[RMDB]
The record gives the reactivity of an RNA of 207 nucleotides to 2A3.
It was measured as part of the RMDB library M2RFPK.
The reactions ran in a buffer of 150 mM KOAc, 10 mM MgCl2 and 150 mM bicine (pH 8.5), at 24 C.
RNA sequence: GGGAACGACUCGAGUAGAGUCGAAAAACGGUCAUAUACGUAUGACCGAAUGAGCAUAACAGGGCCACCCCAAAGCGUUCACAUUGUGGACCCUGUCAGAUUCUGGUAAAUCUGCGAGUUCUGCUAAAUUAGGUAACUCUCUUCGGAGAGUUACCAAGGCAGAACAUUUGUUCGCAAAUGUUCUGCCAAAAGAAACAACAACAACAAC
Reactivity to 2A3 in 0.01 (KOAc 150mM, MgCl2 10mM, bicine 150mM(pH8.5), 24C), signal-to-noise 1, nucleotides 027 to 156: a000c010g000g000u030c030a000u000a000u000a060c100g070u000a030u000g000a000c010c000g030a010a130u160g050a040g000c030a010u060a160a040c010a000g040g000g000c000c000a000c000c020c000c040a060a110a000g040c050g070u120u130c080a130c140a260u060u260g000u040g010g050a110c000c000c000u000g000u010c000a010g000a000u000u100c020u200g000g090u000a010a070a090u010c010u010g020c100g000a030g010u020u060c040u060g040c000u040a130a150a300u230u140a050g010g000u000a000a000c000u000c010u030c000u020u000c080g080g000a000g000a000g000u000u000a000c000c000a000a000